Annotation:
The data come from the RNA Mapping Database (RMDB), library RSTRND. The record gives the reactivity of an RNA of 207 nucleotides to 2A3. The RNA was probed in 150 mM KOAc, 10 mM MgCl2 and 150 mM bicine (pH 8.5) at 24 C. For 2A3 the reverse transcriptase was SuperScript II with manganese.

[RMDB]
RNA sequence: GGGAACGACUCGAGUAGAGUCGAAAACGUCUCUCCAGUCCUCCGCUCAUGAGGGUUGGGUCCGAGGCGUCGACCAAAAUGAGCUAGCAAUCGGGUGGUGUUCUGGUCGCCCCGGCGCGAAAAUAUACAGAAUAGCGUUAUAGUAUCCCUGUUCCGACAUUUUUUUUAUCUUCGGAUAAAAAAAAUGAAAAGAAACAACAACAACAAC
Reactivity to 2A3 in 0.01 (KOAc 150mM, MgCl2 10mM, bicine 150mM(pH8.5), 24C), signal-to-noise 1, nucleotides 027 to 156: c000g020u010c000u010c000u000c000c000a000g020u000c000c020u010c030c120g040c120u160c080a060u220g010a020g000g000g010u000u000g000g010g000u090c110c100g010a010g000g000c010g010u010c010g040a030c010c020a030a040a030a140u080g000a040g000c020u010a010g050c070a040a080u110c060g010g130g000u010g020g050u060g020u080u050c050u050g020g040u050c000g050c010c000c020c000g010g020c030g030c000g030a070a030a000a030u220a040u060a060c070a060g100a110a070u060a120g050c020g020u050u090a080u080a120g030u050a110u100c050c010c010u040g100u050u010c020c010g020a000